[RMDB]
RNA sequence: GGGAACGACUCGAGUAGAGUCGAAAACCCGUUUUGUUCGCAAAACGGGACUCAUCUUUGCUUGGCAGCAUAGCAGGUGUUGGCUGGACUGCUGCCUUAUCCUUGGAGGCAGUUUCGACUGCCUCAAUGCUCCACUCUGAUUCGUCAGAGUGGAGCAAAAAGAAACAACAACAACAAC
Reactivity to DMS in 0.01 (KOAc 150mM, MgCl2 10mM, bicine 150mM(pH8.5), 24C), signal-to-noise 1, nucleotides 027 to 126: c010c030c000g010u000u000u000u000g000u000u010c270g040c010a020a030a010a000c000g060g040g010a100c150u000c130a110u000c050u000u000u010g010c070u000u000g000g000c090a010g020c040a050u000a080g000c020a060g010g030u000g010u040u020g040g030c020u000g000g010a200c300u000g000c000u010g010c010c080u020u040a080u000c050c020u010u010g020g000a030g020g030c000a010g010u000u000u010c140g010a040c010u000g000c000c010u020c000a010a030

The record gives the reactivity of an RNA of 177 nucleotides to DMS. For DMS, 965 sequencing reads were counted. DMS (dimethyl sulfate) methylates the pairing face of unpaired adenines and cytosines. The data come from the RNA Mapping Database (RMDB), library M2PK50. The reactions ran in a buffer of 150 mM KOAc, 10 mM MgCl2 and 150 mM bicine (pH 8.5), at 24 C.